The record gives the reactivity of an RNA of 177 nucleotides to DMS.
In probing experiments dimethyl sulfate is read out at A N1 and C N3, which are open when not base-paired.
The DMS profile rests on 758 reads.
The RNA was probed in 150 mM KOAc, 10 mM MgCl2 and 150 mM bicine (pH 8.5) at 24 C.
DMS adducts were read by reverse transcription with MarathonRT.

RNA sequence: GGGAACGACUCGAGUAGAGUCGAAAAUGUUAUGAUUGUCUAGCCCUGCGUCUAAAGAAAUAGAAAUUUGAUAGAUUGCAUCUUGUAAAAGCGUCUCAAAAUUAUGCAAAUACGCCCCGCUAGUAACUCAGAUUUAACAGUUCGCUGUUAAAUCUGAAAAAGAAACAACAACAACAAC
Reactivity to DMS in 0.01 (KOAc 150mM, MgCl2 10mM, bicine 150mM(pH8.5), 24C), signal-to-noise 1, nucleotides 027 to 126: u000g020u010u000a050u010g000a120u000u000g010u010c020u010a140g000c010c030c040u000g010c050g010u000c050u010a020a060a300g000a030a100a030u000a140g010a100a130a210u010u000u000g010a270u020a000g000a040u000u000g020c000a090u000c100u030u000g010u000a030a030a080a050g030c040g040u010c050u000c110a010a050a060a100u020u000a030u000g000c010a010a080a100u000a030c100g000c030c000c010c070g000c130u010a030g000u000a030a110c180